Source information: An RNA of 177 nucleotides, treated with 2A3 and DMS and read out base by base. For 2A3 the reverse transcriptase was SuperScript II with manganese. Values cover nucleotides 27 to 126. Reactivities are rounded to 0.1 and cut off at 0 and 3. The 2A3 profile rests on 4,169 reads.
[RMDB]
RNA sequence: GGGAACGACUCGAGUAGAGUCGAAAAGCGCCUGUGCCAGCUCACCUCUGGCCAUGGCGCAGCUGCUGGUGCACACAGCGGCCAAGGCCAGCUCCACAUUCCUCCCUCCAGCUCCCCACUUCACCGGUGCUUGUAGGAAGUUCGCUUCCUACAAGCAAAAAGAAACAACAACAACAAC
Reactivity to 2A3 in 0.01 (KOAc 150mM, MgCl2 10mM, bicine 150mM(pH8.5), 24C), signal-to-noise 4, nucleotides 027 to 126: g020c020g010c000c000u040g170u290g010c000c000a000g000c050u090c020a060c000c010u060c000u020g000g000c000c000a040u090g010g000c000g020c000a010g000c000u020g000c010u000g000g060u150g060c040a030c020a000c000a080g000c000g010g000c010c020a060a030g060g020c000c000a010g000c020u010c030c020a060c010a070u060u050c010c000u020c000c010c000u010c010c000a010g000c010u020c020c010c010c000a010c020u070u060c030a030c080c040g050g020
Reactivity to DMS in 0.01 (KOAc 150mM, MgCl2 10mM, bicine 150mM(pH8.5), 24C), signal-to-noise 2, nucleotides 027 to 126: g000c000g050c000c000u020g000u020g020c000c000a040g030c150u000c210a050c280c140u050c000u000g000g000c000c020a030u000g020g000c000g000c000a030g020c000u000g000c030u010g020g000u040g000c200a090c070a070c020a050g000c070g040g000c020c090a050a060g000g010c020c080a110g010c100u000c030c030a030c070a080u000u000c020c030u010c030c000c020u020c020c040a100g000c050u010c000c040c010c040a070c040u040u020c080a100c020c030g000g010